[RMDB]
RNA sequence: GGGAACGACUCGAGUAGAGUCGAAAAUUCUAACUGUGAAUACCUCGCCGAGAACAUCAUCGAACGGAUAUCUACUGAAGACUUGCUCAAGGAGUACGUUGAUGCCACGGCAGCAGCUAUAGGCGGUGCCGCAGCAGGGGGAGAACCGCCUAAAGAGAUUAUCGUUCAUAUUCGUAUGAACGAUAAUAAAAGAAACAACAACAACAAC
Reactivity to DMS in 0.01 (KOAc 150mM, MgCl2 10mM, bicine 150mM(pH8.5), 24C), signal-to-noise 2, nucleotides 027 to 156: u000u020c020u000a070a050c030u020g000u020g010a090a100u000a140c040c040u000c060g060c050c020g020a250g010a170a100c030a040u000c060a050u000c050g030a100a100c020g030g020a090u000a060u000c020u000a260c040u020g010a130a160g020a080c050u000u020g000c030u000c050a070a120g020g000a130g010u020a110c040g010u000u000g000a050u000g000c000c010a280c040g020g020c000a130g020c050a050g010c040u010a100u000a040g020g010c000g000g000u000g030c030c040g070c040a030g000c070a090g030g030g050g020g020a180g000a060a060c000c010g030c000c010u000a000a040a060g020a170g000
Reactivity to 2A3 in 0.01 (KOAc 150mM, MgCl2 10mM, bicine 150mM(pH8.5), 24C), signal-to-noise 3, nucleotides 027 to 156: u080u030c030u050a110a130c050u020g050u040g150a060a050u160a200c030c020u070c050g050c010c010g020a040g030a120a060c030a080u100c000a000u020c030g070a030a040c040g030g010a040u030a090u140c050u120a150c030u040g050a060a030g060a100c010u100u130g030c020u100c090a070a090g050g000a030g030u050a030c030g000u000u010g020a020u010g000c040c030a030c000g020g000c010a020g030c010a010g000c010u060a040u040a200g000g020c010g000g000u020g030c020c010g090c030a070g050c050a060g010g020g010g020g000a040g020a000a010c010c000g000c010c000u000a030a050a000g010a000g010